RNA sequence: GGGAACGACUCGAGUAGAGUCGAAAAUACUUUUCUGGGUUUGUAACAUCUUAGCUGAGGUUUUGCAAUUGAAAACUUGAGCAGAGUGAAAAUGGUUUCUAGAGGAAUUCCGUAUGUCAUCUCCUGCAUACAUAUCCCACUUCGGUGGGAUAUGUAUAAAAGAAACAACAACAACAAC
Reactivity to DMS in 0.01 (KOAc 150mM, MgCl2 10mM, bicine 150mM(pH8.5), 24C), signal-to-noise 2, nucleotides 027 to 126: u010a100c070u010u010u000u030c050u000g000g000g020u000u000u000g020u000a090a080c050a080u000c040u010u000a170g050c060u010g030a040g000g000u010u020u010u000g010c060a110a150u020u020g000a050a040a060a030c050u000u000g000a060g030c020a230g000a060g000u000g000a070a070a080a060u010g000g010u000u000u000c030u000a140g000a120g020g000a060a080u010u000c060c040g020u000a030u000g000u000c010a060u000c060u000c020c010u000g010c150